This 177-nucleotide RNA was probed chemically with 2A3 and DMS. 2A3 adducts were read by reverse transcription with SuperScript II with manganese.

RNA sequence: GGGAACGACUCGAGUAGAGUCGAAAAUAGAUCGGGGUCGGCGACCCUCUGGGUAUGCCGAUCUCCCACAUAAUGGCCUCAGGCAUGACAGGAAUGAGAGCAGCAGGAGACCUUGUUGCAAGGAUGCCCAUCGCUAUGAAUUCGUUCAUAGCGAUGGAAAAGAAACAACAACAACAAC
Reactivity to 2A3 in 0.01 (KOAc 150mM, MgCl2 10mM, bicine 150mM(pH8.5), 24C), signal-to-noise 3, nucleotides 027 to 126: u210a010g100a050u100c090g010g000g010g010u000c010g000g000c000g010a010c010c040c030u080c070u100g010g000g000u040a130u220g010c000c000g000a010u010c000u000c000c000c000a060c010a030u270a120a090u200g070g000c000c000u050c050a050g010g000c030a050u100g010a090c080a080g090g080a100a070u170g020a060g000a000g110c020a010g010c000a000g030g030a050g040a120c020c020u070u030g030u030u030g010c070a030a060g050g010a050u080g000c000
Reactivity to DMS in 0.01 (KOAc 150mM, MgCl2 10mM, bicine 150mM(pH8.5), 24C), signal-to-noise 3, nucleotides 027 to 126: u050a070g030a140u010c170g000g000g000g000u000c000g000g000c010g000a010c010c010c000u040c140u020g000g020g020u000a060u040g010c010c000g020a000u000c000u010c000c070c020a090c160a080u060a070a040u030g020g010c020c000u000c040a080g000g000c070a040u000g010a090c140a080g010g010a130a080u020g010a080g020a090g000c040a030g000c020a040g000g000a080g000a050c060c000u010u010g000u010u000g000c040a060a100g000g010a100u030g010c180